[RMDB]
RNA sequence: GGGAACGACUCGAGUAGAGUCGAAAAGUCGGCUGGGAAUGGUCUCGGGUGGUGUCUCCGGGGCGCUGAUGUGAAAGGUGCCAGGUCGGUAUUCCACGACAGUGCCACCUGCCUUUUCGAGGUGCGCGAUCUAUGGUAUGUUCGCAUACCAUAGAUCAAAAGAAACAACAACAACAAC
Reactivity to DMS in 0.01 (KOAc 150mM, MgCl2 10mM, bicine 150mM(pH8.5), 24C), signal-to-noise 8, nucleotides 027 to 126: g020u000c040g020g020c040u000g010g010g000a100a090u010g010g010u000c050u000c040g010g000g020u000g010g010u000g000u000c030u010c040c060g020g010g010g010c030g020c020u000g010a130u010g010u020g010a040a060a070g010g010u000g020c130c020a050g000g010u000c090g020g010u000a070u000u010c090c060a110c130g010a060c160a040g010u000g000c020c010a030c020c010u000g010c020c010u000u000u000u000c040g010a110g000g000u000g010c070g020c110
Reactivity to 2A3 in 0.01 (KOAc 150mM, MgCl2 10mM, bicine 150mM(pH8.5), 24C), signal-to-noise 7, nucleotides 027 to 126: g140u040c030g000g030c030u050g030g040g090a120a170u130g090g070u060c030u030c050g050g010g030u040g030g010u040g120u020c020u000c030c030g040g010g010g000c000g000c030u060g020a140u120g090u050g090a080a040a020g030g000u050g050c080c010a010g030g050u060c080g020g000u050a080u120u070c070c050a100c080g080a050c050a030g030u020g030c010c000a020c000c000u020g000c020c000u030u040u020u030c030g040a050g010g050u090g030c080g000c060
Chemical mapping of a 177-nucleotide RNA with DMS and 2A3. DMS adducts were read by reverse transcription with MarathonRT.